[RMDB]
RNA sequence: GGGAACGACUCGAGUAGAGUCGAAAAGAUAUGGAGCGUGAACUACUACAGCGAGGGAAUCGGAAACGAUUCCUACCCACCGCUGGGCACGCUCCUAAGUCAAAACUAACGAGUUCGCUCGUUAGAAGGUAUAACGAUUGUUCGCAAUCGUUAUACCAAAAGAAACAACAACAACAAC
Reactivity to 2A3 in 0.01 (KOAc 150mM, MgCl2 10mM, bicine 150mM(pH8.5), 24C), signal-to-noise 3, nucleotides 027 to 126: g020a010u020a020u090g000g000a010g000c010g010u010g020a110a100c030u210a080c060u210a260c300a080g000c010g010a050g010g010g010a000a010u000c010g000g000a010a020a010c000g000a010u000u000c000c000u010a030c030c010c000a080c030c030g000c040u080g000g010g020c010a000c000g000c000u010c000c000u000a010a000g000u000c010a000a020a090a120c010u010a000a000c010g000a000g020u090u120c250g110c130u010c000g000u010u000a000g010a040a040
Reactivity to DMS in 0.01 (KOAc 150mM, MgCl2 10mM, bicine 150mM(pH8.5), 24C), signal-to-noise 5, nucleotides 027 to 126: g000a020u000a160u010g000g000a020g020c000g020u000g000a120a070c060u010a140c260u010a130c180a050g030c000g000a230g020g000g000a010a010u000c010g010g010a030a020a060c000g010a010u000u000c000c000u000a010c070c060c090a300c110c020g010c000u020g000g000g010c010a000c000g020c000u000c010c000u000a000a080g000u000c020a060a040a090a160c020u000a000a000c000g000a010g000u000u020c280g000c010u000c000g000u000u000a000g010a060a050
Chemical mapping of a 177-nucleotide RNA with 2A3 and DMS. The reactions ran in a buffer of 150 mM KOAc, 10 mM MgCl2 and 150 mM bicine (pH 8.5), at 24 C. For DMS, 5,533 sequencing reads were counted. For 2A3 the reverse transcriptase was SuperScript II with manganese. For DMS the reverse transcriptase was MarathonRT. Reactivities are given for positions 27 through 126.